[RMDB]
RNA sequence: GGGAACGACUCGAGUAGAGUCGAAAACCCGGGUACUCGGGCCGCCGCUGCAAAGCCAACUUUGGAAAAAGUUUUUGGGGGGAGACUUUGGCCUUGAGGUGCCCGGCUCUGCACUUUCCGACUUCGGAGCAGUGCUUCAAUUCGUUGAAGCACUGCUAAAAGAAACAACAACAACAAC
Reactivity to 2A3 in 0.01 (KOAc 150mM, MgCl2 10mM, bicine 150mM(pH8.5), 24C), signal-to-noise 1, nucleotides 027 to 126: c000c000c020g000g000g000u020a050c040u060c050g010g010g000c000c000g040c000c000g070c060u070g090c000a030a030a090g040c000c070a050a060c050u100u050u060g050g040a140a030a010a020a030g040u020u010u000u100u140g010g000g000g000g000g000a040g000a010c000u100u070u120g020g040c000c000u030u260g060a010g000g090u090g000c000c000c020g010g010c010u040c000u000g000c000a000c010u020u000u030c000c060g040a070c020u100u100c040g050g010
Conditions: 150 mM KOAc, 10 mM MgCl2 and 150 mM bicine (pH 8.5), 24 C.
An RNA of 177 nucleotides, treated with 2A3 and read out base by base.
The data come from the RNA Mapping Database (RMDB), library RFM100.
2A3 is a SHAPE reagent: it acylates the 2'-hydroxyl of flexible nucleotides of all four kinds.